[RMDB]
RNA sequence: GGGAACGACUCGAGUAGAGUCGAAAAGAUAUGGAAUGUUCCCAUGCCUCAUCGAUCGUUUGUCGGAAACGACAAACGGGAGAGGGAUGGGAGACAUUCCUAAGUCAAAUCGUGCUUCGGCACGAAACCUUUAGCUCAUCUUCGGAUGAGCUAAAGGAAAAGAAACAACAACAACAAC
Reactivity to 2A3 in 0.01 (KOAc 150mM, MgCl2 10mM, bicine 150mM(pH8.5), 24C), signal-to-noise 3, nucleotides 027 to 126: g030a030u090a070u160g010g010a000a000u030g020u060u030c030c010c030a030u110g290c000c010u130c050a300u300c070g130a110u040c000g010u000u000u040g010u010c010g020g030a110a080a100c030g000a000c000a000a010a000c000g000g010g000a060g010a000g010g030g030a010u010g020g000g000a140g080a020c000a010u010u000c010c000u010a150a040g040u020c030a030a050a160u050c000g000u010g000c000u110u130c300g180g000c000a000c000g010a050a010a020
Reactivity to DMS in 0.01 (KOAc 150mM, MgCl2 10mM, bicine 150mM(pH8.5), 24C), signal-to-noise 2, nucleotides 027 to 126: g020a030u000a300u010g000g010a010a000u000g000u010u000c000c000c010a010u000g000c000c000u000c010a300u000c250g010a080u000c010g000u000u000u000g020u010c000g020g000a100a110a170c000g020a020c000a000a000a000c000g000g010g010a090g030a020g010g010g000a010u000g010g000g010a030g030a010c000a010u000u000c010c000u000a020a110g000u010c080a120a080a120u000c030g040u000g000c000u000u030c230g030g030c000a000c000g010a000a030a140
An RNA of 177 nucleotides, treated with 2A3 and DMS and read out base by base. The reactions ran in a buffer of 150 mM KOAc, 10 mM MgCl2 and 150 mM bicine (pH 8.5), at 24 C. The 2A3 profile rests on 6,455 reads. The data come from the RNA Mapping Database (RMDB), library TTRDES. The DMS profile rests on 2,440 reads.